Structure probing data (2A3) for a 207-nucleotide construct. It was measured as part of the RMDB library OK3TST. Reactivities are given for positions 27 through 156. The reactions ran in a buffer of 150 mM KOAc, 10 mM MgCl2 and 150 mM bicine (pH 8.5), at 24 C.
[RMDB]
RNA sequence: GGGAACGACUCGAGUAGAGUCGAAAAGAGGGAAACAUCAUCGAAAAGGCAGAAAUUCUCCCAGAUGGAACGUAUCACUUCCUCGAAACGAGGUACGACAGGGAAGUCUGUGAUAUAACAAAAAGUGGCUCAAAACACUACACGAUAAAAACUACACGUAAGGGGGAGAUUUCGAUCUCCCCCUUACAAAAGAAACAACAACAACAAC
Reactivity to 2A3 in 0.01 (KOAc 150mM, MgCl2 10mM, bicine 150mM(pH8.5), 24C), signal-to-noise 1, nucleotides 027 to 156: g000a000g030g050g070a000a160a000c030a040u070c000a000u020c050g040a000a000a000a100g000g000c000a010g000a000a040a000u150u010c040u030c000c040c030a000g000a070u040g000g050a000a060c070g030u010a030u050c030a000c070u090u120c060c030u080c010g100a240a140a040c280g000a020g010g000u000a020c060g020a020c000a030g030g020g050a040a040g050u000c010u000g000u030g000a000u000a000u040a070a070c090a020a170a000a000a000g030u020g020g000c010u000c050a060a140a060a040c060a000c030u110a000c210a050c000g190a000u300a040a070a200a000a000c020u270a010c080a020c000